[RMDB]
RNA sequence: GGGAACGACUCGAGUAGAGUCGAAAAGAUAUGGAGAAUGCUCGAACUACACACGGUUCGGAAACGAACCUGGUGUGCGUGAGGCAUUCUCCUAAGUCAAACUAGGUUUAGUUCGCUAAACCUAGAACCUAUAAAAUAACUUCGGUUAUUUUAUAGGAAAAGAAACAACAACAACAAC
Reactivity to 2A3 in 0.01 (KOAc 150mM, MgCl2 10mM, bicine 150mM(pH8.5), 24C), signal-to-noise 3, nucleotides 027 to 126: g020a020u030a040u110g000g000a020g010a030a000u010g010c090u140c300g060a130a060c070u200a040c100a000c000a000c010g020g000u000u000c000g020g030a030a040a010c000g010a000a000c000c060u050g110g050u000g010u000g050c190g090u060g020a040g000g030c000a000u000u010c000u000c000c000u000a000a000g000u000c010a010a050a090c010u000a000g000g020u020u000u000a020g010u020u050c210g000c230u010a010a010a000c000c000u010a000g000a010a000
Reactivity to DMS in 0.01 (KOAc 150mM, MgCl2 10mM, bicine 150mM(pH8.5), 24C), signal-to-noise 5, nucleotides 027 to 126: g000a040u000a300u010g000g010a030g000a010a010u000g010c000u020c030g020a230a070c070u000a030c010a010c000a030c060g010g010u000u000c000g000g000a040a050a180c000g000a000a000c000c010u010g010g020u000g000u000g010c300g010u000g000a180g000g000c000a000u000u000c010u000c000c000u000a000a050g000u000c030a110a120a250c010u000a010g000g000u000u000u000a010g010u000u020c230g010c000u000a000a000a000c000c000u000a000g000a050a120
Structure probing data (2A3 and DMS) for a 177-nucleotide construct.
2A3 is a SHAPE reagent: it acylates the 2'-hydroxyl of flexible nucleotides of all four kinds.
Reactivities are rounded to 0.1 and cut off at 0 and 3.